Background:
An RNA of 177 nucleotides, treated with DMS and 2A3 and read out base by base. The reactions ran in a buffer of 150 mM KOAc, 10 mM MgCl2 and 150 mM bicine (pH 8.5), at 24 C. It was measured as part of the RMDB libraries RFM100 and RFMREP.
RNA sequence: GGGAACGACUCGAGUAGAGUCGAAAAAAAGCAGGCUCUAGUGAUCCGGCGGCCCCACGUGGGAGGGCCGUCGCUCAACGGAUAAAAGGUACUCCGGGGAUAACAGGCUGAUCUUGCCCAAGAGUCCCACAUGCUAAACAUUCGUGUUUAGCAUGUGAAAAGAAACAACAACAACAAC
Reactivity to DMS in 0.01 (KOAc 150mM, MgCl2 10mM, bicine 150mM(pH8.5), 24C), signal-to-noise 6, nucleotides 027 to 126: a050a060a040g000c080a180g010g000c030u010c030u010a080g030u010g010a090u010c160c010g010g000c000g000g010c000c000c000c050a110c230g010u030g010g010g000a140g000g000g020c000c000g010u000c000g030c170u000c110a070a120c030g000g000a020u020a050a070a110a110g010g010u000a090c150u000c020c020g010g000g000g000a080u010a050a080c070a070g000g010c020u000g010a100u010c030u010u000g000c000c000c020a100a090g010a130g000u000c040c030
Reactivity to 2A3 in 0.01 (KOAc 150mM, MgCl2 10mM, bicine 150mM(pH8.5), 24C), signal-to-noise 7, nucleotides 027 to 126: a000a000a020g070c050a030g040g000c010u020c020u160a060g030u030g070a050u040c020c000g000g000c010g000g000c000c000c010c000a100c120g160u230g060g090g030a130g000g000g000c010c000g000u000c000g010c000u030c010a040a050c010g010g010a020u120a080a120a030a020g140g030u060a040c030u000c010c000g000g000g000g030a010u030a120a050c020a030g040g000c010u010g020a100u050c020u040u070g040c000c000c000a030a030g060a010g060u040c010c000